An RNA of 177 nucleotides, treated with DMS and 2A3 and read out base by base. The reactions ran in a buffer of 150 mM KOAc, 10 mM MgCl2 and 150 mM bicine (pH 8.5), at 24 C. It was measured as part of the RMDB library OK2TST. High DMS reactivity at an A or C suggests that its Watson-Crick edge is free.
RNA sequence: GGGAACGACUCGAGUAGAGUCGAAAAUACGAGUGAUCCUGGCCGCGGCCAUAGAGAGCAUGAUCUGGAUCAGAGGCCAUGCGCAUGAGUAGCGCCGCGGUACUGGCCGCGCGCGCCUGGCCGUGUCCCCAGAAUACCCAUUCGUGGGUAUUCUGGGAAAAGAAACAACAACAACAAC
Reactivity to DMS in 0.01 (KOAc 150mM, MgCl2 10mM, bicine 150mM(pH8.5), 24C), signal-to-noise 2, nucleotides 027 to 126: u010a130c080g010a080g010u000g000a070u010c000c000u000g010g000c080c040g010c020g020g000c010c020a050u020a130g000a130g020a110g000c030a030u010g020a050u000c000u000g000g010a130u030c270a170g000a050g000g030c080c010a020u010g000c010g000c050a070u010g010a210g000u000a110g010c020g000c040c010g030c000g010g010u010a020c220u010g010g030c020c000g000c020g000c170g010c010g000c010c070u000g020g020c000c000g030u000g000u000c060
Reactivity to 2A3 in 0.01 (KOAc 150mM, MgCl2 10mM, bicine 150mM(pH8.5), 24C), signal-to-noise 1, nucleotides 027 to 126: u080a000c070g000a000g100u050g030a060u070c000c020u000g010g000c040c040g020c010g000g000c040c020a020u080a010g160a000g000a000g030c010a000u010g040a050u010c010u040g090g090a190u190c050a060g030a010g110g020c030c000a020u010g000c040g000c030a110u150g050a010g110u150a090g000c000g000c020c020g010c000g010g020u000a040c040u030g220g030c000c000g020c000g000c020g000c030g000c030c020u000g040g000c000c000g030u010g030u030c000